[RMDB]
RNA sequence: GGGAACGACUCGAGUAGAGUCGAAAAGCAAACAUUCAGUUGCUCAGUUGGUUAGUUACCUUUCUGAACGCUGUAAUGUUAUUGCUGAUUCUAAGUCCUUCACACUUAUCUUUGGUGGCGUAGCUUAACAACUACGGCUUCGGCCGUAGUAAAAGAAACAACAACAACAAC
Reactivity to DMS in 0.01 (KOAc 150mM, MgCl2 10mM, bicine 150mM(pH8.5), 24C), signal-to-noise 4, nucleotides 027 to 129: g020c000a000a030a040c020a000u000u030c030a030g000u010u030g050c060u020c010a000g020u000u000g020g020u000u000a050g000u080u060a040c040c020u010u010u010c020u030g000a000a000c000g040c020u000g000u050a040a010u020g010u000u000a070u000u000g020c010u000g000a140u040u020c060u000a080a090g000u060c020c000u010u030c110a100c150a050c040u030u040a090u060c070u040u040u000g020g040u030g030g020c000g000u000a000g030c080u000u010a080a090c160a090
Reactivity to 2A3 in 0.01 (KOAc 150mM, MgCl2 10mM, bicine 150mM(pH8.5), 24C), signal-to-noise 8, nucleotides 027 to 129: g010c020a030a020a010c000a000u000u010c010a000g020u070u180g230c010u000c010a000g000u020u010g040g020u040u080a030g040u110u250a070c000c000u030u120u120c000u020g000a000a000c000g000c000u040g040u300a020a010u010g010u030u040a110u080u060g000c000u010g020a070u090u050c030u060a050a030g030u000c000c000u070u080c060a080c000a000c060u070u100a080u210c020u110u080u110g000g000u000g030g020c040g050u030a010g040c060u100u090a070a020c040a040